[RMDB]
RNA sequence: GGGAACGACUCGAGUAGAGUCGAAAAUCUGUAACGUUCGCGUUACAGAAAAGGGUAAGAGAGUACCAGAUCAGAUCAUCCCAGAUCAGGAAACAGAUCAAAAAAGGGCCACGUUCGCGUGGCCCAACCUAUUGAUCAAGUUCGCUUGAUCAAUAGGAAAAGAAACAACAACAACAAC
Reactivity to 2A3 in 0.01 (KOAc 150mM, MgCl2 10mM, bicine 150mM(pH8.5), 24C), signal-to-noise 2, nucleotides 027 to 126: u030c000u010g010u000a010a020c000g010u020u020c190g030c000g130u010u010a000c000a010g010a010a010a010a010g070g030g000u060a090a030g150a040g000a040g300u040a020c020c000a020g010a060u030c000a020g020a040u010c000a000u010c000c000c000a000g000a020u010c000a000g090g000a020a040a030c070a040g010a010u100c050a040a050a010a030a020a120g000g010g030c000c000a010c030g040u060u060c230g000c000g040u000g000g000c000c000c030a000a000
Reactivity to DMS in 0.01 (KOAc 150mM, MgCl2 10mM, bicine 150mM(pH8.5), 24C), signal-to-noise 2, nucleotides 027 to 126: u000c000u000g000u000a000a010c000g020u000u020c250g020c020g010u000u010a010c000a010g000a010a050a060a110g010g000g010u000a050a120g010a140g000a140g020u000a030c020c030a100g000a040u000c030a070g000a030u000c020a070u000c000c010c010a100g020a030u000c010a110g020g010a080a080a120c120a090g000a030u010c020a000a030a060a080a110a130g000g000g000c000c010a000c000g020u000u010c220g030c010g030u000g000g010c000c010c000a000a000
An RNA of 177 nucleotides, treated with 2A3 and DMS and read out base by base. Values cover nucleotides 27 to 126. For DMS, 4,868 sequencing reads were counted. As a SHAPE reagent, 2A3 marks flexible, mostly unpaired nucleotides at the ribose 2'-OH.